This 177-nucleotide RNA was probed chemically with 2A3 and DMS. For DMS the reverse transcriptase was MarathonRT. High 2A3 reactivity points to a flexible backbone, as in loops and unpaired stretches. Values cover nucleotides 27 to 126. For DMS, 8,427 sequencing reads were counted.

RNA sequence: GGGAACGACUCGAGUAGAGUCGAAAACUCGUAUAGCGGGAGUCGAUCUGCCGAACAAACAGAUCCAGAUAGCCCUCACCUAUAUCUAUGGGAUCGGUCGAUCGUCUGCAAGGAAGAUCUGCGAGAGCACCGUACAAAGAUUCGUCUUUGUACGGUGAAAAGAAACAACAACAACAAC
Reactivity to 2A3 in 0.01 (KOAc 150mM, MgCl2 10mM, bicine 150mM(pH8.5), 24C), signal-to-noise 6, nucleotides 027 to 126: c010u010c010g020u090a110u100a150g100c070g010g050g030a040g030u040c010g010a020u000c010u010g010c010c020g060a090a060c040a110a100a010c040a050g040a060u020c030c010a040g020a080u050a050g030c020c020c010u040c040a070c000c020u050a030u030a030u220c060u050a130u140g060g000g030a050u050c020g010g010u030c020g020a020u020c010g040u000c030u040g050c030a020a030g120g040a060a060g020a090u030c020u050g000c010g020a060g010a020g050
Reactivity to DMS in 0.01 (KOAc 150mM, MgCl2 10mM, bicine 150mM(pH8.5), 24C), signal-to-noise 7, nucleotides 027 to 126: c020u000c020g020u000a070u000a090g020c090g020g010g000a110g020u000c040g010a030u000c000u000g010c020c020g000a080a120c220a080a100a110c110a060g010a040u000c050c080a080g010a060u000a090g000c060c020c010u000c070a120c160c040u000a060u000a040u000c060u000a100u010g020g010g010a080u000c030g000g000u000c250g000a020u000c020g010u000c010u010g000c140a110a110g000g020a050a080g000a050u000c030u000g000c020g000a080g010a170g010